Structure probing data (DMS) for a 177-nucleotide construct.
For DMS, 749 sequencing reads were counted.
The RNA was probed in 150 mM KOAc, 10 mM MgCl2 and 150 mM bicine (pH 8.5) at 24 C.
For DMS the reverse transcriptase was MarathonRT.
Source: RMDB library VIROID, as collected in RNAgym.
RNA sequence: GGGAACGACUCGAGUAGAGUCGAAAAUGAGCCUCCCGAACCGAACGCCCCGACGCCCAAGUUUGGAAAGCACUCCGGCCCAAAGGGUUGAAUUCCACCCAGAGGGGGGAAGCCACACGGAGAAAGGGUUCUUAAGAAUCUUCGGAUUCUUAAGAACAAAAGAAACAACAACAACAAC
Reactivity to DMS in 0.01 (KOAc 150mM, MgCl2 10mM, bicine 150mM(pH8.5), 24C), signal-to-noise 2, nucleotides 027 to 126: u010g010a110g010c040c030u000c020c010c010g000a110a110c050c010g010a070a090c090g010c020c040c030c050g010a120c070g020c030c000c010a070a110g000u000u000u000g000g010a090a070a100g030c050a130c040u010c010c000g010g030c010c000c010a010a240a180g000g000g010u010u000g010a040a190u010u010c050c040a050c030c000c010a060g000a300g000g000g000g020g000g010a000a020g000c060c010a050c200a130c050g010g000a030g010a140a120a080g000g000